[RMDB]
RNA sequence: GGGAACGACUCGAGUAGAGUCGAAAAUACUUAGUACGCGCGUAGUUGCAGGCAUUCCGGGUGCAGCAACUGACGCGGAAGACUUUUCCCUGAGUGUGCGCUUCAACUGGCGUGCUGAGUAGUGCACGAAUUGCACGUACGUUCGCGUACGUGCAAAGAUGAGUCUUCAUUUCGAUGAAGACUCAUCAAAAGAAACAACAACAACAAC
Reactivity to DMS in 0.01 (KOAc 150mM, MgCl2 10mM, bicine 150mM(pH8.5), 24C), signal-to-noise 2, nucleotides 027 to 156: u000a050c090u010u000a090g010u000a070c010g030c020g030c020g000u000a050g010u000u000g000c010a140g010g010c010a060u000u010c030c300g020g070g110u000g000c030a300g000c020a010a020c000u010g010a010c020g010c010g010g000a090a080g010a100c090u010u010u000u000c010c000c000u020g000a150g020u000g000u000g010c020g020c030u000u000c040a070a110c140u000g030g010c000g030u000g010c020u000g010a090g020u000a060g060u000g000c000a050c020g020a080a200u000u000g020c010a000c000g030u000a000c020g020u000u010c300g050c030g050u010a000c000g030u010g000c000a000a000a100
Reactivity to 2A3 in 0.01 (KOAc 150mM, MgCl2 10mM, bicine 150mM(pH8.5), 24C), signal-to-noise 3, nucleotides 027 to 156: u070a010c000u000u010a010g000u010a000c000g000c000g000c000g040u040a020g000u000u010g000c060a110g090g030c000a020u090u100c150c180g230g030g010u010g000c010a010g000c000a010a000c000u090g170a070c000g000c000g000g000a000a000g140a060c030u200u090u030u010c000c000c000u010g040a040g050u110g000u010g000c010g020c010u050u080c060a170a130c120u070g020g010c000g000u010g000c000u000g010a010g020u070a020g010u030g000c000a000c000g040a060a110u040u020g000c000a010c000g000u000a000c000g010u030u070c180g010c000g100u000a000c000g000u000g000c000a000a000a000